[RMDB]
RNA sequence: GGGAACGACUCGAGUAGAGUCGAAAAGAUAUGGAGUUACGGUACAUAGCAACAGCUUAGAUCGGAAACGAUCUAAGACAUGCUGGGUAUUAACUCCUAAGUCAAAACGCUCUGUUCGCAGAGCGAAGUUUUGGCACAAGUUCGCUUGUGCCAAAACAAAAGAAACAACAACAACAAC
Reactivity to DMS in 0.01 (KOAc 150mM, MgCl2 10mM, bicine 150mM(pH8.5), 24C), signal-to-noise 1, nucleotides 027 to 126: g010a020u000a300u000g000g030a000g000u010u000a050c300g000g000u000a000c040a120u000a010g000c000a020a110c300a160g000c000u000u020a000g000a000u000c020g000g000a030a070a170c040g000a010u000c000u000a000a010g020a000c100a140u020g010c020u010g020g040g000u020a060u000u000a000a010c010u000c000c000u050a050a140g000u000c000a000a040a190a150c020g020c000u000c000u000g000u000u020c220g010c010a000g010a010g000c000g000a000a020
Reactivity to 2A3 in 0.01 (KOAc 150mM, MgCl2 10mM, bicine 150mM(pH8.5), 24C), signal-to-noise 1, nucleotides 027 to 126: g040a010u090a070u130g000g000a000g000u040u000a080c220g090g000u080a030c060a080u040a060g060c060a060a140c040a280g130c010u000u000a010g010a000u000c030g010g060a040a080a040c010g010a000u000c010u000a000a000g030a010c040a070u070g000c000u030g100g000g080u050a050u050u070a000a000c010u000c000c000u000a200a010g070u000c000a050a060a070a070c030g020c020u000c000u000g080u050u140c300g040c090a010g000a000g000c010g010a030a010

Source: RMDB library TTRDES, as collected in RNAgym. This 177-nucleotide RNA was probed chemically with DMS and 2A3. Conditions: 150 mM KOAc, 10 mM MgCl2 and 150 mM bicine (pH 8.5), 24 C.